[RMDB]
RNA sequence: GGGAACGACUCGAGUAGAGUCGAAAAAAUGCCCUGGGCGAAAGUCCCCGGGCCUAGGAUAGAAAGUAUCAAGGUGUAAAAAGUGUGCACAAAACACCCACCACCCCUGUGGUGGGUGGUGCAUUCGCACCUUAGUAGUAUUCGUACUACUAAGGUGAAAAGAAACAACAACAACAAC
Reactivity to DMS in 0.01 (KOAc 150mM, MgCl2 10mM, bicine 150mM(pH8.5), 24C), signal-to-noise 8, nucleotides 027 to 126: a110a060u020g010c010c000c010u000g000g010g000c010g010a100a100a260g000u020c010c000c010c070g010g000g010c000c050u010a030g010g000a050u010a030g010a120a120a110g010u010a020u000c030a090a080g010g010u010g010u020a050a060a090a070a110g010u000g010u000g000c010a020c020a080a070a090a300c010a010c000c000c000a000c010c010a020c010c150c140c230u010g020u000g000g020u010g000g000g020u000g000g010u000g000c010a020u000u000c040g010
Reactivity to 2A3 in 0.01 (KOAc 150mM, MgCl2 10mM, bicine 150mM(pH8.5), 24C), signal-to-noise 8, nucleotides 027 to 126: a000a010u110g000c000c000c000u010g010g000g000c070g110a270a040a030g130u240c000c000c000c010g010g010g000c020c000u070a070g040g010a010u010a060g170a100a250a030g150u050a040u090c060a080a060g100g040u130g050u200a060a100a020a060a060g050u070g000u010g010c060a010c000a020a230a090a030c010a030c000c000c000a000c000c000a010c010c110c020c150u190g000u010g000g000u010g000g000g000u000g000g000u000g000c000a000u020u010c030g000